[RMDB]
RNA sequence: GGGAACGACUCGAGUAGAGUCGAAAACAAAAUGUGCGCCAUUAACAUUGUUUAUGCAAGCACGUUUCGCAAUGUACGGCGCAGAAACAUUGCCAACACAAAUACGCUUCACGAUGUGCGGCACAGAAAAAGCUCGCGCACUUCGGUGCGCGAGCAAGAAUAUAUUACUCUUCGGAGUAAUAUAUUCAAAAGAAACAACAACAACAAC
Reactivity to 2A3 in 0.01 (KOAc 150mM, MgCl2 10mM, bicine 150mM(pH8.5), 24C), signal-to-noise 2, nucleotides 027 to 156: c040a010a020a020a090u150g000u020g000c030g020c020c010a090u120u190a060a000c050a070u070u060g070u060u140u130a090u170g040c110a110a040g080c040a030c130g020u010u050u060c040g000c010a010a000u000g020u020a080c070g040g030c040g000c080a000g040a000a060a000c010a000u020u020g000c050c020a140a020c040a040c030a050a170a040u250a070c040g020c020u070u050c090a030c040g080a070u090g030u050g070c060g000g000c120a030c010a040g160a020a150a020a000a000g010c000u010c000g000c000g000c000a000c000u000u020c120g070g030u000g020c020g000c000g000a020g000c000a000a000